[RMDB]
RNA sequence: GGGAACGACUCGAGUAGAGUCGAAAAUUUCAUAUUUGCUGGAGAAUAAAGUUUAUCUUUUAUCUGUCAGAUCCAGGAAUUUGACCACCUUAUUGCAAGUUAUUUAUUUGCAUGAAAAUAAAUAGCUGGUUGCAUGGUUUGGCUGCAACUAUGAAAACCAGUAAUGGAGGUUCGCCUCCAUUACUGGAAAAGAAACAACAACAACAAC
Reactivity to 2A3 in 0.01 (KOAc 150mM, MgCl2 10mM, bicine 150mM(pH8.5), 24C), signal-to-noise 1, nucleotides 027 to 156: u020u020u000c010a000u000a030u030u050u020g020c030u020g050g060a020g040a180a190u080a100a080a060g030u040u120u230a110u100c040u020u050u040u000a080u030c030u070g070u010c040a010g010a060u020c010c070a070g030g100a080a070u020u000u060g030a010c010c020a030c000c030u060u170a150u130u020g010c010a000a000g000u000u010a010u040u030u010a030u000u000u050g000c010a060u160g000a070a000a000a000u010a000a010a000u000a000g010c000u080g150g010u130u090g000c010a020u000g000g110u060u070u160g030g020c000u040g000c000a000a000c010u040a000u080g010a000a090a000a040
The data come from the RNA Mapping Database (RMDB), library OK3TST. This 207-nucleotide RNA was probed chemically with 2A3. 2A3 is a SHAPE reagent: it acylates the 2'-hydroxyl of flexible nucleotides of all four kinds. The 2A3 profile rests on 613 reads.